The record gives the reactivity of an RNA of 177 nucleotides to DMS and 2A3.
The reactions ran in a buffer of 150 mM KOAc, 10 mM MgCl2 and 150 mM bicine (pH 8.5), at 24 C.
RNA sequence: GGGAACGACUCGAGUAGAGUCGAAAAGCUCAGACUCUUCCAGGAGCAGCUCGCGGAGAAGGGUGUCACGCUCGAGGUCACCGAUCGAUGCGUGCGAUGGCUCGCGGAACACGGGUAUUCGCCGGUCCGUCCUCACCGUGUUCGCACGGUGAGGACGAAAAGAAACAACAACAACAAC
Reactivity to DMS in 0.01 (KOAc 150mM, MgCl2 10mM, bicine 150mM(pH8.5), 24C), signal-to-noise 1, nucleotides 027 to 126: g000c060u000c040a050g030a120c000u010c000u030u000c050c030a250g030g040a010g040c030a170g000c000u000c030g000c020g000g000a260g000a020a060g000g020g020u000g000u020c010a030c050g020c200u020c120g000a110g010g020u000c030a010c020c010g020a240u000c030g000a270u000g010c000g000u030g010c040g020a170u010g000g000c000u000c060g000c110g000g000a040a010c240a170c070g030g000g000u000a140u050u000c040g030c050c010g070g020u000c050
Reactivity to 2A3 in 0.01 (KOAc 150mM, MgCl2 10mM, bicine 150mM(pH8.5), 24C), signal-to-noise 1, nucleotides 027 to 126: g040c040u040c040a040g010a180c020u070c030u080u040c040c010a000g110g000a000g000c000a000g000c000u020c050g000c010g060g000a120g040a040a010g110g000g030u010g030u040c030a080c110g110c050u200c130g130a200g040g040u060c020a010c040c000g040a040u020c000g000a000u040g050c050g000u010g030c010g130a130u130g210g040c060u020c100g160c020g100g030a020a010c110a030c040g050g000g000u020a080u080u130c120g000c090c050g010g000u010c050